This 177-nucleotide RNA was probed chemically with 2A3. For 2A3, 452 sequencing reads were counted. 2A3 adducts were read by reverse transcription with SuperScript II with manganese. The reactions ran in a buffer of 150 mM KOAc, 10 mM MgCl2 and 150 mM bicine (pH 8.5), at 24 C. Source: RMDB library OK1LIB, as collected in RNAgym.
RNA sequence: GGGAACGACUCGAGUAGAGUCGAAAAGCCAGCACAUUGCGCAUCAGCGGCUGAUCGAUCAGGUAGGCGCCAAAGGCCUUGCGGUGCUGGGCGUGAUGCAUCGCCCGGGUCAGCCCGGAACGCAUGCGCGAUGGUCCGGAUUCGUCCGGACCAUCGCAAAAGAAACAACAACAACAAC
Reactivity to 2A3 in 0.01 (KOAc 150mM, MgCl2 10mM, bicine 150mM(pH8.5), 24C), signal-to-noise 1, nucleotides 027 to 126: g090c010c000a040g090c010a130c000a100u040u200g000c050g000c000a130u020c070a060g000c070g000g000c000u080g010a080u000c150g030a060u000c040a030g070g050u070a040g000g020c000g090c050c030a050a270a000g300g040c000c120u070u140g090c090g070g000u000g000c030u050g050g020g000c040g090u100g110a300u240g030c000a000u000c000g070c030c000c000g050g010g000u000c000a000g030c000c000c000g000g000a130a000c070g000c030a000u000g080c030